[RMDB]
RNA sequence: GGGAACGACUCGAGUAGAGUCGAAAAAGUACUUUUUGUUUGUAGCACUUUGGGGGAGUUUUAAAGUCCUAUGCAGCUAUGAAAGUAGGUGUCAGUGUCUCUGAAGCCACAAAAGUGUCAUUCUGCUGAAGUGUCAUAGAUAGAGAUUGACAGUACACUCCUGAGUAAAUUUCGAUUUACUCAGGAGAAAAGAAACAACAACAACAAC
Reactivity to 2A3 in 0.01 (KOAc 150mM, MgCl2 10mM, bicine 150mM(pH8.5), 24C), signal-to-noise 2, nucleotides 027 to 156: a010g060u070a080c060u180u010u050u160u100g020u100u130u090g030u050a020g010c030a030c090u050u050u050g000g010g020g050g020a020g030u070u040u000u250a070a110a000g000u010c000c000u030a030u110g000c000a000g030c030u050a030u120g010a100a050a040g010u060a060g010g030u050g040u030c050a000g050u020g090u050c020u000c000u120g030a040a030g000c000c010a060c020a000a110a050a010g020u030g070u070c000a030u100u000c010u030g090c000u000g050a100a020g020u010g000u070c010a040u030a070g060a050u040a010g030a010g030a090u060u070g000a010c020a000g010u010a020c040a010
Reactivity to DMS in 0.01 (KOAc 150mM, MgCl2 10mM, bicine 150mM(pH8.5), 24C), signal-to-noise 1, nucleotides 027 to 156: a050g020u000a020c010u000u000u000u000u000g020u010u000u010g020u000a050g020c000a050c020u000u000u000g020g060g030g020g020a110g000u010u010u000u000a000a080a120g030u000c020c040u010a100u010g020c030a050g020c020u010a090u040g000a110a080a130g020u040a040g000g050u020g010u000c190a140g000u000g040u010c060u010c020u000g000a080a130g030c040c030a030c050a080a100a080a090g020u000g020u010c040a080u020u010c060u020g010c050u000g010a030a070g030u000g000u000c070a070u010a050g020a210u000a110g010a100g020a140u000u000g030a060c050a070g000u010a110c050a110
The record gives the reactivity of an RNA of 207 nucleotides to 2A3 and DMS. DMS adducts were read by reverse transcription with MarathonRT. Source: RMDB library OK3TST, as collected in RNAgym. The reactions ran in a buffer of 150 mM KOAc, 10 mM MgCl2 and 150 mM bicine (pH 8.5), at 24 C.